The record gives the reactivity of an RNA of 207 nucleotides to 2A3. The reactions ran in a buffer of 150 mM KOAc, 10 mM MgCl2 and 150 mM bicine (pH 8.5), at 24 C.
[RMDB]
RNA sequence: GGGAACGACUCGAGUAGAGUCGAAAAGAGGCUUGAGUCGGAGGACGGUUUGAGUGCGGGGGUUCUGCUCUCGGGCGUGCCAUGUCGAUCGGGUGUCCGCACUAAGCCCGGCAUUAAUAUGGUGAUCUUGUAGGAAUACGAGAUUUCCAGGUUGACUAGCACAUGUAAAGUUCGCUUUACAUGUGCUAAAAGAAACAACAACAACAAC
Reactivity to 2A3 in 0.01 (KOAc 150mM, MgCl2 10mM, bicine 150mM(pH8.5), 24C), signal-to-noise 2, nucleotides 027 to 156: g070a030g030g020c060u080u070g020a010g030u060c030g050g050a060g010g030a020c010g030g020u060u040u170g050a010g020u020g060c030g010g000g010g000g000u060u120c030u100g010c000u030c020u020c000g060g030g010c010g020u060g020c030c040a220u280g030u120c090g040a160u070c030g010g020g020u060g060u030c020c010g060c010a010c010u010a030a020g000c010c010c000g020g000c010a020u160u070a090a080u180a120u160g030g000u020g010a000u000c000u000u000g010u010a010g020g180a090a040u000a000c000g000a000g000a000u010u010u000c000c000a010g050g020u010u060g060a110c060u020